The record gives the reactivity of an RNA of 207 nucleotides to 2A3 and DMS.
RNA sequence: GGGAACGACUCGAGUAGAGUCGAAAAUACAUAGCUGUACAGUGCAACAAAAGUAAAGUCAUAACAGUAGAAGAAGGUGACAAUGUGAAACUUGGAAACUCUAGACAUCAUGGACAUCAUGUUACUUGGUAUCAGCCACCAUGUGAUGGUAUAUGGAGGUUCCAGUUUAUUUCGAUAAACUGGAACCAAAAGAAACAACAACAACAAC
Reactivity to 2A3 in 0.01 (KOAc 150mM, MgCl2 10mM, bicine 150mM(pH8.5), 24C), signal-to-noise 4, nucleotides 027 to 156: u120a010c070a010u080a040g040c030u030g030u090a050c030a050g060u020g110c050a070a040c020a060a100a050a030g090u120a060a050a020g030u090c020a060u070a200a040c040a060g120u140a050g030a090a010g040a050a010g040g010u020g020a020c030a050a050u040g040u040g080a080a040a040c010u030u070g080g020a060a040a010c030u030c030u050a050g010a070c030a060u060c010a020u060g030g020a020c020a030u080c010a010u070g020u060u050a080c030u060u070g020g000u040a070u140c010a010g060c020c010a050c060c010a020u070g040u020g030a040u040g000g090u050a060u020a030u100g130g020a050
Reactivity to DMS in 0.01 (KOAc 150mM, MgCl2 10mM, bicine 150mM(pH8.5), 24C), signal-to-noise 2, nucleotides 027 to 156: u000a130c050a120u000a100g020c040u010g040u000a080c050a150g020u000g030c010a060a140c080a040a090a100a100g030u000a040a060a120g000u000c040a040u000a100a090c060a090g020u010a100g010a050a120g020a050a110g030g030u010g010a090c070a020a140u000g020u010g000a090a080a090c060u000u020g010g000a120a070a110c040u020c020u010a070g000a050c060a070u010c020a060u000g020g010a060c000a050u000c090a110u010g010u010u000a110c020u000u000g030g030u000a070u010c080a140g000c040c020a010c040c010a130u000g000u000g000a020u010g000g030u020a050u010a090u000g010g030a300
The reactions ran in a buffer of 150 mM KOAc, 10 mM MgCl2 and 150 mM bicine (pH 8.5), at 24 C.